[RMDB]
RNA sequence: GGGAACGACUCGAGUAGAGUCGAAAAAGCCUCAAGCUUCUCUAGAUCAACGAUUAUAGCUGCAGGGAAGAUUAUCCAACCCCAUCCUGAAUCAGGUUGCCAUAAGUAAGCUUUUACACAAAUUAAGCUUAAGUACUGUUUUCGAACAGUACUUAAGAAAAGAAACAACAACAACAAC
Reactivity to 2A3 in 0.01 (KOAc 150mM, MgCl2 10mM, bicine 150mM(pH8.5), 24C), signal-to-noise 4, nucleotides 027 to 126: a000g070c020c000u050c090a050a030g010c010u080u030c030u030c020u070a110g010a240u110c020a020a070c020g070a080u100u090a070u210a140g020c040u060g020c040a010g000g000g030a050a020g010a060u110u150a080u080c020c030a020a050c020c000c000c020a020u040c020c010u030g050a050a060u070c020a040g060g000u020u040g010c030c000a080u060a100a020g060u030a040a010g030c010u030u040u110u190a120c150a000c020a020a170a080u200u140a110a030g030
Reactivity to DMS in 0.01 (KOAc 150mM, MgCl2 10mM, bicine 150mM(pH8.5), 24C), signal-to-noise 6, nucleotides 027 to 126: a090g010c030c010u000c120a110a150g020c020u000u000c020u010c030u010a120g030a080u010c040a050a040c060g000a120u010u010a100u010a100g010c050u000g000c080a040g010g010g000a040a060g010a080u010u000a070u000c080c050a070a130c070c020c020c040a100u000c050c030u000g010a090a060u010c090a040g010g020u000u000g010c040c040a060u010a060a070g020u010a060a070g000c040u010u010u000u000a080c110a070c170a040a050a100u010u000a060a080g010